RNA sequence: GGGAACGACUCGAGUAGAGUCGAAAACCCAAACACUUUUGUUGCAGGUUUUUUCCCCUUUAAACAGCAAUGGUCAUUCCUUUGGCCCCUAAACAACACAAUUGAGAAUAUCUAAGUGAUUAUGGACAAAUUCAGUUGAACCAAUCCAAGAACCAUAACGUAGUACCAGUUUCGACUGGUACUACGUAAAAGAAACAACAACAACAAC
Reactivity to 2A3 in 0.01 (KOAc 150mM, MgCl2 10mM, bicine 150mM(pH8.5), 24C), signal-to-noise 1, nucleotides 027 to 156: c000c020c000a000a090a000c030a020c010u160u050u140u100g040u120u080g020c260a220g000g000u040u000u020u000u100u250c020c000c030c060u120u160u150a000a060a020c030a050g030c010a030a130u110g010g000u010c000a000u000u150c020c000u090u150u030g040g030c000c000c000c000u110a170a110a000c020a050a000c010a020c000a150a000u200u230g000a030g010a070a040u120a060u150c020u010a060a020g000u050g160a050u130u060a030u110g000g020a010c020a000a140a050u070u070c010a140g100u000u000g050a090a070c050c000a010a040u140c050c000a040a030g070a040a070c020c020a010u030a050
Reactivity to DMS in 0.01 (KOAc 150mM, MgCl2 10mM, bicine 150mM(pH8.5), 24C), signal-to-noise 2, nucleotides 027 to 156: c010c010c030a130a100a140c150a080c090u020u010u000u000g020u010u010g020c020a100g010g000u000u040u000u000u020u000c050c000c010c030u000u010u020a070a140a120c050a110g000c080a130a110u000g010g010u000c030a080u000u010c040c030u000u010u000g030g000c000c020c030c060u000a060a040a070c080a110a060c040a070c040a040a100u000u010g020a160g030a100a100u000a080u000c000u010a070a100g000u000g000a090u000u000a100u000g010g020a190c040a040a050a120u010u000c030a120g040u010u000g020a020a070c020c020a070a040u010c030c080a090a080g030a090a090c010c000a030u010a060